RNA sequence: GGGAACGACUCGAGUAGAGUCGAAAAGCUGGGGAUAGUUGCGGCCGCUGUAUCCGAGAUACUUCUAACUUGUUUGUCCAGCCGGCGUUGCAAGUAAUUUUUUCGUAUUGGUUUUAUACCGCGCCGCGAUCACGAUACUGUUCGCAGUAUCGUGAUCAAAAGAAACAACAACAACAAC
Reactivity to 2A3 in 0.01 (KOAc 150mM, MgCl2 10mM, bicine 150mM(pH8.5), 24C), signal-to-noise 7, nucleotides 027 to 126: g020c040u050g020g010g000g070a080u080a150g100u090u130g020c000g030g000c080c030g000c040u020g010u040a020u030c020c020g040a040g010a080u070a040c020u050u080c030u080a100a120c020u030u050g050u090u090u170g090u050c020c030a080g020c100c050g000g000c040g060u090u110g020c040a040a010g040u150a070a160u080u090u050u030u040u120c050g020u040a090u050u100g040g010u050u040u130u140a080u040a020c010c000g020c000g000c000c010g010c030
Reactivity to DMS in 0.01 (KOAc 150mM, MgCl2 10mM, bicine 150mM(pH8.5), 24C), signal-to-noise 3, nucleotides 027 to 126: g010c030u010g020g010g020g010a050u020a040g000u000u000g030c010g000g000c040c040g020c050u010g020u020a040u010c120c040g000a130g000a040u010a050c060u020u000c070u020a080a090c060u020u010g000u010u010u000g020u020c020c050a110g020c090c070g030g000c020g000u010u010g000c050a040a060g050u030a020a010u000u040u010u000u020u020c100g000u010a040u010u000g010g020u020u010u030u010a070u030a040c030c060g020c040g000c000c010g020c060

An RNA of 177 nucleotides, treated with 2A3 and DMS and read out base by base. It was measured as part of the RMDB library OK1LIB.